Chemical mapping of a 177-nucleotide RNA with 2A3 and DMS. The 2A3 profile rests on 880 reads. For 2A3 the reverse transcriptase was SuperScript II with manganese. For DMS, 3,156 sequencing reads were counted.

RNA sequence: GGGAACGACUCGAGUAGAGUCGAAAAAGUGGCAGUUGCGUUUUGAAGAGGGGCUAUACCUUGAGUAUAGGAAAUUUCUUGUUAGUCUGUCAGUCGAUUUCGUGGAAAUGGAUUCGAAAGCAACGUAAUUAGUACUGCGUUUCGACGCAGUACUAAUAAAAGAAACAACAACAACAAC
Reactivity to 2A3 in 0.01 (KOAc 150mM, MgCl2 10mM, bicine 150mM(pH8.5), 24C), signal-to-noise 1, nucleotides 027 to 126: a000g110u070g000g020c030a000g040u100u050g060c010g010u080u050u030u190g050a070a000g040a040g110g000g000g030c000u000a000u000a040c010c010u140u150g180a140g070u030a020u000a000g040g000a040a050a090u070u050u010c020u030u040g050u120u040a020g010u000c020u050g060u110c030a000g020u020c010g010a020u020u030u050c050g020u100g070g020a030a030a050u080g080g000a070u040u010c070g000a070a060a000g030c000a010a000c040g020u050a000
Reactivity to DMS in 0.01 (KOAc 150mM, MgCl2 10mM, bicine 150mM(pH8.5), 24C), signal-to-noise 2, nucleotides 027 to 126: a080g010u010g020g010c040a060g000u000u000g010c030g020u010u000u000u000g010a040a070g000a070g020g000g000g000c010u000a030u000a020c020c020u000u000g000a180g010u000a010u010a010g010g010a060a050a100u000u000u000c040u000u000g000u010u000a110g010u010c020u000g010u010c070a070g020u000c020g000a040u000u000u000c030g060u010g030g020a040a080a050u000g000g000a070u020u000c050g010a020a060a070g020c070a030a030c080g010u010a040
Description: The RNA was probed in 150 mM KOAc, 10 mM MgCl2 and 150 mM bicine (pH 8.5) at 24 C. DMS adducts were read by reverse transcription with MarathonRT.